[RMDB]
RNA sequence: GGGAACGACUCGAGUAGAGUCGAAAACGGCCCGUGCGACUCGCCGGACCUCGCGGGCGUCCCUGUACGGAGCCCUCGGCCGGUCCUAGCAGGGAUUGUCCCCAUUUCCAGCUCCGGAGCGGGCGGCGGCUUAGCAUAGAUUCGUCUAUGCUAAGCCAAAAGAAACAACAACAACAAC
Reactivity to DMS in 0.01 (KOAc 150mM, MgCl2 10mM, bicine 150mM(pH8.5), 24C), signal-to-noise 3, nucleotides 027 to 126: c070g030g000c000c000c010g020u010g010c030g020a130c090u010c110g030c040c000g010g020a050c120c010u020c150g030c280g000g010g020c000g010u000c000c010c020u010g020u000a070c300g010g010a080g010c040c020c040u000c120g000g010c110c130g020g000u000c020c000u010a300g000c010a020g000g000g000a020u010u010g030u010c010c000c010c040a080u000u000u000c090c050a080g020c170u000c030c030g010g010a160g020c030g000g010g030c030g000g030c130
Reactivity to 2A3 in 0.01 (KOAc 150mM, MgCl2 10mM, bicine 150mM(pH8.5), 24C), signal-to-noise 2, nucleotides 027 to 126: c010g080g020c010c000c000g000u050g030c020g180a180c050u050c110g060c040c020g000g000a000c000c010u070c150g010c170g010g000g000c010g000u000c020c000c000u020g020u050a040c110g010g060a090g230c000c060c080u170c110g180g000c090c060g000g020u030c010c000u020a050g010c030a010g000g010g010a030u090u300g140u260c030c000c010c000a060u190u160u050c050c020a020g000c030u010c000c010g010g040a060g020c010g000g000g010c000g070g030c030